[RMDB]
RNA sequence: GGGAACGACUCGAGUAGAGUCGAAAAGAAACUAGGAAAAGUCAGCAUUGACGAAAUGCGAAGGCGCAUACAGCCGAAGUAUGCAAACUAGGAAACCGGAACUGACGGGAACAGUUCGAAUAAGAAAGGGUAUGUAAUUCUUCGGAAUUACAUACCCAAAAGAAACAACAACAACAAC
Reactivity to DMS in 0.01 (KOAc 150mM, MgCl2 10mM, bicine 150mM(pH8.5), 24C), signal-to-noise 3, nucleotides 027 to 126: g010a170a100a160c020u000a030g000g000a080a080a110a100g020u000c040a130g000c010a040u010u000g000a100c180g020a060a020a010u000g000c010g000a130a130g030g000c070g000c000a000u000a010c010a100g050c120c070g000a170a090g030u010a000u000g010c030a030a090a080c000u010a020g000g000a080a140a130c040c010g040g000a020a030c010u000g000a140c170g000g010g000a100a110c000a000g000u000u000c000g020a060a020u050a100a120g000a100a100a160
Reactivity to 2A3 in 0.01 (KOAc 150mM, MgCl2 10mM, bicine 150mM(pH8.5), 24C), signal-to-noise 3, nucleotides 027 to 126: g120a040a060a020c050u080a020g040g120a160a110a050a060g120u050c050a010g000c030a030u020u040g070a130c130g050a020a010a010u010g030c000g070a120a090g030g020c020g010c020a020u010a010c000a020g040c050c090g010a080a000g000u000a000u020g020c070a040a070a040c020u040a020g010g120a130a020a040c020c020g000g000a000a000c000u010g100a040c050g070g010g010a010a020c010a000g000u010u000c000g040a030a150u190a170a050g140a160a040a040